[RMDB]
RNA sequence: GGGAACGACUCGAGUAGAGUCGAAAACGACGAUGACAUCUAAACCUUUCCCCUUAACAAUUUUAUGCAGGAAAAUGUCGCAAAUGGCUUUACGCGCACUAUGAGGAUUCGGGCUAUCGAGGUUGGGAGGCACAUACUCUUUCGAGAGUAUGUGCCUAAAAGAAACAACAACAACAAC
Reactivity to DMS in 0.01 (KOAc 150mM, MgCl2 10mM, bicine 150mM(pH8.5), 24C), signal-to-noise 2, nucleotides 027 to 126: c100g000a070c110g000a070u000g000a070c050a090u020c060u010a030a040a080c070c030u000u000u000c030c020c030c160u000u000a060a070c300a090a010u000u000u010u000a090u000g020c080a070g000g000a050a080a080a040u010g000u000c000g010c040a030a070a070u000g020g000c010u010u010u000a050c110g020c070g000c080a040c070u000a040u000g010a060g010g000a120u000u000c050g030g010g010c050u000a050u010c090g050a060g000g000u040u010g000g030g000